[RMDB]
RNA sequence: GGGAACGACUCGAGUAGAGUCGAAAAAGAGUCGAUCGAAGGAGAGAGACUAGAGCUGACUAGGAUCAGGAAGUCCUCUUCAGAGGAAGUCGACUUCGACUAGAGCUUCGAGACUCUAGGAAGUCUCAGUCAGAGAGGAGAAGGAAGUCGACUGAGAGACCAUGAGUUGAUUCGUCAACUCAUGGUCAAAAGAAACAACAACAACAAC
Reactivity to DMS in 0.01 (KOAc 150mM, MgCl2 10mM, bicine 150mM(pH8.5), 24C), signal-to-noise 1, nucleotides 027 to 156: a130g000a040g050u000c000g030a300u000c040g000a150a090g020g040a140g040a070g000a200g000a070c010u000a040g030a220g000c010u000g000a090c010u030a110g040g010a150u000c000a160g010g070a270a070g020u010c010c020u000c000u000u000c080a060g040a100g090g000a070a040g000u010c000g030a000c000u000u000c000g020a160c060u010a040g020a060g000c040u010u010c180g000a300g000a070c000u000c010u000a040g000g070a020a100g040u020c000u000c030a040g000u010c050a180g000a200g020a100g020g000a190g010a210a170g000g000a080a070g020u000c000g020a060c010u060g010a150g000a100
Reactivity to 2A3 in 0.01 (KOAc 150mM, MgCl2 10mM, bicine 150mM(pH8.5), 24C), signal-to-noise 3, nucleotides 027 to 156: a000g030a010g010u020c010g030a040u040c040g010a100a060g050g000a000g000a000g010a020g010a000c020u030a020g100a040g300c020u030g010a010c010u100a150g090g130a270u020c010a010g000g050a050a020g000u010c000c000u000c000u010u020c000a030g010a040g160g060a070a000g000u010c020g000a020c000u000u010c010g010a000c000u010a010g000a000g000c000u080u100c190g080a100g040a150c020u000c000u010a030g020g040a030a010g060u030c020u000c020a060g040u020c090a010g060a020g000a030g130g050a080g030a090a020g130g010a020a010g010u000c020g010a000c020u040g000a030g000a000